[RMDB]
RNA sequence: GGGAACGACUCGAGUAGAGUCGAAAAGAGGAUACGAACAGCUUCGUGCUUUCGAUAGCUUCGUAGCGGCGGCUACGUACCCUAGGGGAGCCGCCUCCCCUGCUAUCGGCGCGAGGGGAGUAUCCGACCUAGUAUGCUCAUUCGUGAGCAUACUAGGAAAAGAAACAACAACAACAAC
Reactivity to 2A3 in 0.01 (KOAc 150mM, MgCl2 10mM, bicine 150mM(pH8.5), 24C), signal-to-noise 5, nucleotides 027 to 126: g170a040g010g000a000u010a010c010g080a230a030c050a080g170c030u020u020c000g020u010g010c020u110u210u210c020g010a000u010a010g000c010u030u050c030g020u020a010g000c020g170g010c040g020g000c020u010a020c040g060u100a060c040c020c030u020a030g000g010g030g010a010g120c120c040g100c080c010u010c000c000c000c000u000g000c000u000a010u020c020g010g000c010g000c000g010a010g010g010g000g010a020g000u000a000u000c000c000g000a000
Reactivity to DMS in 0.01 (KOAc 150mM, MgCl2 10mM, bicine 150mM(pH8.5), 24C), signal-to-noise 5, nucleotides 027 to 126: g010a180g020g000a020u000a010c000g000a220a180c240a130g020c030u010u000c010g020u000g000c020u010u000u000c070g000a020u010a010g010c020u010u000c020g020u000a010g000c060g020g010c210g020g010c000u000a020c050g010u000a080c120c060c110u010a050g020g000g010g010a040g030c140c190g010c160c010u000c000c010c010c010u000g000c010u000a020u000c020g010g000c020g000c010g000a020g000g010g010g010a300g000u000a010u000c000c000g000a150

Structure probing data (2A3 and DMS) for a 177-nucleotide construct. The RNA was probed in 150 mM KOAc, 10 mM MgCl2 and 150 mM bicine (pH 8.5) at 24 C. Reactivities are given for positions 27 through 126. The 2A3 profile rests on 18,798 reads.